[RMDB]
Chemical mapping of a 177-nucleotide RNA with 2A3 and DMS. The RNA was probed in 150 mM KOAc, 10 mM MgCl2 and 150 mM bicine (pH 8.5) at 24 C. Source: RMDB library RFM100, as collected in RNAgym. For DMS the reverse transcriptase was MarathonRT.
RNA sequence: GGGAACGACUCGAGUAGAGUCGAAAAGACCCUGCCGUCGCCGAUGACGUAGCUCAGCCGGCGGUUGACCCGGUAGGUCCCGCCGGGGGUGUGCACCCAGGGCAGCAUGCGCAGGAGCCAACGCGAGAACCCGAUGAAUGUUCGCAUUCAUCGGGUUAAAAGAAACAACAACAACAAC
Reactivity to 2A3 in 0.01 (KOAc 150mM, MgCl2 10mM, bicine 150mM(pH8.5), 24C), signal-to-noise 2, nucleotides 027 to 126: g030a020c010c030c000u000g010c030c000g030u010c030g020c010c000g080a160u060g040a020c090g060u170a020g010c020u030c030a070g070c030c020g000g000c020g020g000u020u140g000a000c000c010c070g140g080u270a100g070g030u000c000c000c000g000c000c000g040g000g000g000g030u050g050u120g080c020a050c010c010c000a030g000g030g000c040a030g030c040a070u160g000c100g000c050a010g040g010a030g010c000c000a070a030c040g040c010g030a070g010
Reactivity to DMS in 0.01 (KOAc 150mM, MgCl2 10mM, bicine 150mM(pH8.5), 24C), signal-to-noise 2, nucleotides 027 to 126: g000a120c080c000c000u000g020c000c000g040u000c080g000c040c020g010a110u010g000a070c200g050u000a260g000c000u000c030a110g040c000c010g000g000c000g000g010u010u030g010a020c010c000c150g000g050u120a210g030g050u000c020c010c000g030c000c000g040g000g020g020g020u020g020u000g010c090a160c040c020c020a040g010g020g000c030a130g010c100a030u040g000c050g000c000a050g000g000a130g000c010c020a080a060c060g010c100g000a090g020